[RMDB]
RNA sequence: GGGAACGACUCGAGUAGAGUCGAAAAUCAAUAGUAGAAUCUUACAAAUCGUCGUAUUCUACUAGGAGUAUGUGACGAUUGUUACUCCACAUACUCAUUAGUCAGUGGAGUAAAUGAACUGACUGAAGAUAGUAAUGUGAUUCGUCGCGUUACUAUCAAAAGAAACAACAACAACAAC
Reactivity to DMS in 0.01 (KOAc 150mM, MgCl2 10mM, bicine 150mM(pH8.5), 24C), signal-to-noise 9, nucleotides 027 to 126: u020c060a080a100u000a010g000u000a000g000a010a010u010c100u020u020a060c080a070a100a110u030c210g010u010c240g010u020a010u000u000c000u000a010c010u000a020g010g010a020g010u000a010u000g010u000g010a130c130g000a060u010u010g010u010u030a070c130u010c070c010a010c000a000u000a000c010u000c040a180u020u020a020g000u000c020a010g010u000g010g020a160g010u040a050a040a080u030g010a140a030c020u000g000a010c000u000g010a090a100
Reactivity to 2A3 in 0.01 (KOAc 150mM, MgCl2 10mM, bicine 150mM(pH8.5), 24C), signal-to-noise 9, nucleotides 027 to 126: u110c030a010a110u020a020g010u000a000g010a010a010u020c030u080u120a060c050a050a180a180u160c110g090u010c030g020u090a010u000u000c000u000a020c000u010a040g010g030a010g010u020a010u030g030u020g020a060c070g030a070u050u130g110u100u120a070c040u000c010c000a000c000a000u010a000c000u010c020a060u050u100a010g010u000c020a000g000u020g030g080a100g070u170a050a020a050u110g020a030a020c010u010g020a000c010u030g020a060a020